Chemical mapping of a 177-nucleotide RNA with 2A3 and DMS. 2A3 adducts were read by reverse transcription with SuperScript II with manganese.
[RMDB]
RNA sequence: GGGAACGACUCGAGUAGAGUCGAAAAGAGAAAGAUGAGGCACAGAAAAUCAAAGACCGGAUCUUGUUUGCCACAGACAUUCCAGCAGAAGAUCUCAACAGAGUCGCAGCACUUGCAGAUCUGCUGCCGUUAACUAGCACUUCGGUGCUAGUUAACGAAAAGAAACAACAACAACAAC
Reactivity to 2A3 in 0.01 (KOAc 150mM, MgCl2 10mM, bicine 150mM(pH8.5), 24C), signal-to-noise 1, nucleotides 027 to 126: g080a010g000a030a150a020g090a070u060g000a010g060g050c050a030c020a000g200a050a190a010a030u120c030a130a090a050g120a100c060c040g090g030a070u000c000u020u070g000u100u090u060g030c000c000a030c000a000g080a020c020a070u100u060c030c020a030g000c020a000g000a060a000g020a020u020c000u020c020a000a030c060a080g090a010g120u070c040g010c240a060g000c020a010c040u030u080g020c020a010g000a060u000c010u030g090c010u030g020c020
Reactivity to DMS in 0.01 (KOAc 150mM, MgCl2 10mM, bicine 150mM(pH8.5), 24C), signal-to-noise 2, nucleotides 027 to 126: g010a260g000a030a120a040g010a130u000g020a090g000g020c020a030c110a140g010a050a040a070a040u000c070a040a110a120g000a120c180c140g000g000a050u000c030u000u000g000u010u000u000g000c020c030a060c070a050g000a060c080a170u000u000c070c010a050g050c020a000g000a030a040g010a020u000c000u000c000a010a050c160a050g000a080g020u000c040g020c080a110g050c070a060c070u000u010g020c180a060g000a020u000c010u000g000c010u000g000c020
The 2A3 profile rests on 738 reads. Reactivities are rounded to 0.1 and cut off at 0 and 3. For DMS, 896 sequencing reads were counted. The RNA was probed in 150 mM KOAc, 10 mM MgCl2 and 150 mM bicine (pH 8.5) at 24 C.